[RMDB]
RNA sequence: GGGAACGACUCGAGUAGAGUCGAAAAACUGCGCCACUAGCUACGGCUUGUGGCGCAGAGGGAAACUCCCAGGCCCCGCUGUAGAGGGACCGUCAGCGGCCGGGCCAGAAAGAAUGAGGUCCCCAAAAGAAGUGGAUACUCUUCGGAGUAUCCACAACAACUACCUUGAGUUCGCUCAAGGUAGUUGAAAAGAAACAACAACAACAAC
Reactivity to 2A3 in 0.01 (KOAc 150mM, MgCl2 10mM, bicine 150mM(pH8.5), 24C), signal-to-noise 1, nucleotides 027 to 156: a010c030u010g040c040g020c010c010a000c110u150a000g010c000u010a020c220g200g000c000u000u000g000u000g000g000c050g040c000a000g010a000g000g010g030a030a090a040c060u030c000c000c000a000g010g000c000c000c060c000g000c030u000g010u070a110g040a160g200g000g000a000c000c000g020u020c030a010g010c000g100g000c170c150g110g020g000c000c030a050g130a040a110a000g090a030a080u250g020a080g030g000u020c000c000c000c010a030a180a010a010g110a250a020g000u000g000g010a000u000a000c010u010c000u090u150c300g000g010a000g000u000a000u000c000c000a000c000a000a000